[RMDB]
RNA sequence: GGGAACGACUCGAGUAGAGUCGAAAAUUAAGAAUCAUAGGAAUUUUCCUUUAACGCAUAUGUCAUUGGACGAUGAGAUUAUCCCACUAGAAUUGUCGUCUGCCUACAGGGAUAGGAGUGUAUGGCCCGCAUGUGACGUAUUCGUACGUCACAUGCGAAAAGAAACAACAACAACAAC
Reactivity to DMS in 0.01 (KOAc 150mM, MgCl2 10mM, bicine 150mM(pH8.5), 24C), signal-to-noise 2, nucleotides 027 to 126: u010u060a040a070g000a060a050u000c080a080u000a040g040g000a080a150u040u030u000u000c030c000u000u020u000a060a110c170g000c190a050u000a080u000g000u040c010a100u000u000g000g000a070c050g040a010u020g030a070g000a050u010u000a060u000c020c020c000a050c190u020a060g000a080a160u000u000g000u000c030g010u000c000u000g080c050c000u000a000c000a120g000g000g010a180u010a110g000g000a050g050u040g000u020a000u020g000g010c030c280
Reactivity to 2A3 in 0.01 (KOAc 150mM, MgCl2 10mM, bicine 150mM(pH8.5), 24C), signal-to-noise 3, nucleotides 027 to 126: u090u040a070a000g160a070a060u140c130a120u060a080g090g030a130a160u100u100u120u230c000c000u090u050u160a080a100c080g070c010a000u050a060u110g140u080c030a050u050u190g030g000a000c000g020a030u060g040a040g020a070u080u140a040u130c000c030c010a000c000u090a090g100a250a170u020u080g030u010c010g000u020c000u050g000c000c000u020a040c030a050g090g130g000a110u040a030g070g000a050g020u020g020u060a080u070g040g010c000c000
The data come from the RNA Mapping Database (RMDB), library OK1LIB. This 177-nucleotide RNA was probed chemically with DMS and 2A3. 2A3 adducts were read by reverse transcription with SuperScript II with manganese. The RNA was probed in 150 mM KOAc, 10 mM MgCl2 and 150 mM bicine (pH 8.5) at 24 C.